[RMDB]
RNA sequence: GGGAACGACUCGAGUAGAGUCGAAAAUGAUUGGCCUGCACGACCAGCAGUGCGGCAAACGUGAUUACGGCGGCAAAGCACAGCAGCAGCAGUUCAGCGUUGCGCCGAGUCGGCAACGGGGGCGUUACUCACCUACUAAGUUCGCUUAGUAGGUGAGAAAAGAAACAACAACAACAAC
Reactivity to 2A3 in 0.01 (KOAc 150mM, MgCl2 10mM, bicine 150mM(pH8.5), 24C), signal-to-noise 6, nucleotides 027 to 126: u250g020a120u090u130g100g020c000c000u060g020c030a010c050g120a160c030c010a010g050c020a010g020u010g030c010g010g000c000a050a080a000c050g030u080g040a090u090u160a050c020g020g020c010g010g000c050a090a060a010g050c010a030c030a070g020c020a010g000c010a000g010c000a030g050u070u110c030a020g020c030g050u090u060g020c010g000c000c030g010a030g030u070c020g020g020c020a040a020c020g030g010g020g000g000c010g000u000u020a050
Reactivity to DMS in 0.01 (KOAc 150mM, MgCl2 10mM, bicine 150mM(pH8.5), 24C), signal-to-noise 5, nucleotides 027 to 126: u040g010a090u010u020g000g000c030c000u030g020c050a040c030g000a130c030c050a090g000c030a120g010u010g010c020g000g020c040a050a050a080c090g000u010g000a100u010u020a060c080g010g030c030g000g020c040a040a110a100g020c040a050c060a060g020c030a070g000c060a080g020c020a070g000u020u020c090a090g010c020g000u010u000g010c030g010c030c030g010a100g010u000c030g010g030c080a060a040c050g010g010g000g000g010c030g000u020u010a090
Chemical mapping of a 177-nucleotide RNA with 2A3 and DMS. Values are in units of 0.01, from 0 to 300, in steps of 10. High 2A3 reactivity points to a flexible backbone, as in loops and unpaired stretches. In probing experiments dimethyl sulfate is read out at A N1 and C N3, which are open when not base-paired. The 2A3 profile rests on 8,064 reads.